[RMDB]
RNA sequence: GGGAACGACUCGAGUAGAGUCGAAAAGAGCGUCGAGAGACGAAGAGAAGUGCAUAGAUCCACAACGGAGAACGUAAUAAUGCACUCGUGUGGAUUAGUGUCCGGAACAACGGGCACAAGAGGCAGAACCAGGCGAGUAUUUCGAUACUCGCCUGGUAAAAGAAACAACAACAACAAC
Reactivity to DMS in 0.01 (KOAc 150mM, MgCl2 10mM, bicine 150mM(pH8.5), 24C), signal-to-noise 3, nucleotides 027 to 126: g000a120g020c010g000u000c000g020a290g000a270g000a000c000g000a110a090g040a080g020a210a070g000u040g000c020a080u000a090g000a030u000c000c010a000c040a060a030c010g000g010a010g000a140a050c100g000u020a080a120u030a130a080u060g000c090a070c000u000c000g010u000g000u030g000g000a040u000u000a120g000u020g000u000c000c000g000g050a140a150c170a190a170c010g030g000g000c000a000c000a090a050g000a260g010g000c060a030g000a120
Reactivity to 2A3 in 0.01 (KOAc 150mM, MgCl2 10mM, bicine 150mM(pH8.5), 24C), signal-to-noise 2, nucleotides 027 to 126: g050a050g040c000g000u000c020g040a000g000a000g000a090c060g020a050a000g100a020g040a180a040g080u120g030c000a020u020a100g010a020u000c000c000a000c000a180a070c060g200g050a020g000a070a020c060g020u050a010a090u120a200a000u300g010c050a020c060u000c010g040u000g000u000g060g000a040u010u070a020g010u000g000u000c000c000g000g050a000a070c050a150a010c040g040g000g000c010a000c010a020a000g110a020g050g040c040a020g000a070
The data come from the RNA Mapping Database (RMDB), library OK1LIB. Chemical mapping of a 177-nucleotide RNA with DMS and 2A3. DMS adducts were read by reverse transcription with MarathonRT. The RNA was probed in 150 mM KOAc, 10 mM MgCl2 and 150 mM bicine (pH 8.5) at 24 C. For 2A3, 1,673 sequencing reads were counted. As a SHAPE reagent, 2A3 marks flexible, mostly unpaired nucleotides at the ribose 2'-OH.